RNA sequence: GGGAACGACUCGAGUAGAGUCGAAAACGCAUUGGAAACAUUUUAUGCUCGAGUUGGAAGGCCAAAAUUGAGCAUUAUACAAACAGGCCUUUUGAUUUUGCAAUGCCGUAGUGAAUGUCAUAACAAAUAAUGGUCAUAGGUUCGCCUAUGACCAUUAAAAAGAAACAACAACAACAAC
Reactivity to DMS in 0.01 (KOAc 150mM, MgCl2 10mM, bicine 150mM(pH8.5), 24C), signal-to-noise 2, nucleotides 027 to 126: c170g000c030a000u010u000g010g000a070a020a090c300a080u000u000u010u000a070u020g000c000u010c050g000a010g020u000u010g010g000a050a020g010g010c000c000a040a010a080a130u000u000g020a020g010c030a010u000u000a040u020a100c200a050a030a090c240a120g000g000c000c000u000u000u000u010g010a150u000u000u000u000g020c000a030a010u000g000c030c050g000u000a100g010u010g000a070a040u000g020u000c050a070u010a050a110c150a070a090a090
The record gives the reactivity of an RNA of 177 nucleotides to DMS.
Reactivities are given for positions 27 through 126.
Source: RMDB library OK2TST, as collected in RNAgym.